[RMDB]
RNA sequence: GGGAACGACUCGAGUAGAGUCGAAAAGGCAAUAACGAACUAAUUCUAAGCAAGUAAUGGAGAAAUGCCAGGGUCACUAUCUAGCCUUAAUAGUGCUUGACAGUAUGAUACUAACUGAACAAUAAGUAAAAGCGCUGGUACUUCGGUACCAGCGCAAGAAAUGCUCGUUGUUCGCAACGAGCAUUUCAAAAGAAACAACAACAACAAC
Reactivity to 2A3 in 0.01 (KOAc 150mM, MgCl2 10mM, bicine 150mM(pH8.5), 24C), signal-to-noise 2, nucleotides 027 to 156: g030g000c040a070a120u140a140a080c080g040a030a020c030u080a100a010u060u040c000u040a030a040g030c020a050a020g030u060a120a050u040g050g040a030g020a050a120a030u110g030c020c030a030g030g000g020u020c000a000c020u010a030u000c020u070a040g020c000c000u030u020a020a000u000a090g010u000g010c010u020u010g030a000c000a010g000u020a020u020g080a010u000a040c000u020a040a020c030u010g020a050a010c020a050a060u030a020a040g010u030a010a070a060a140g050c000g000c000u000g000g030u000a000c000u010u060c200g040g000u000a000c020c000a000g050c000g000c000a000a000
Chemical mapping of a 207-nucleotide RNA with 2A3.
Conditions: 150 mM KOAc, 10 mM MgCl2 and 150 mM bicine (pH 8.5), 24 C.
2A3 adducts were read by reverse transcription with SuperScript II with manganese.